[RMDB]
RNA sequence: GGGAACGACUCGAGUAGAGUCGAAAAGCAUACAACUUCGGUUGUAUGCAACGACAGAGUUGACUGUCAUAAACAACGUAACAUCUGAGUUACAAUAACACAUUGCAGCAGCUUUCGAGCUGCUGAAAACGUUAUGACGUUUCGACGUCAUAACGUUAAAAGAAACAACAACAACAAC
Reactivity to 2A3 in 0.01 (KOAc 150mM, MgCl2 10mM, bicine 150mM(pH8.5), 24C), signal-to-noise 2, nucleotides 027 to 126: g040c000a000u000a000c010a000a020c000u040u070c190g150g000u000u000g010u000a000u000g000c010a010a010c030g000a010c000a010g030a000g060u020u060g100a220c030u000g020u010c020a000u150a020a090a040c070a010a040c060g000u000a010a000c010a040u140c120u270g080a020g090u020u020a000c000a020a070u230a110a080c120a010c020a100u080u300g080c010a000g010c000a000g000c000u080u020u120c170g060a010g000c000u020g030c000u000g000a010a000
Reactivity to DMS in 0.01 (KOAc 150mM, MgCl2 10mM, bicine 150mM(pH8.5), 24C), signal-to-noise 3, nucleotides 027 to 126: g000c020a020u010a000c000a000a010c030u000u010c200g000g000u010u000g010u000a000u000g000c030a010a050c180g010a030c010a010g000a090g030u000u000g010a240c000u000g000u000c090a130u010a010a040a090c080a050a050c140g020u000a020a010c020a100u000c240u000g010a140g020u000u000a000c010a140a130u000a080a070c210a040c140a090u000u000g010c000a020g010c030a000g000c000u000u000u010c240g010a010g020c000u000g020c000u000g000a020a040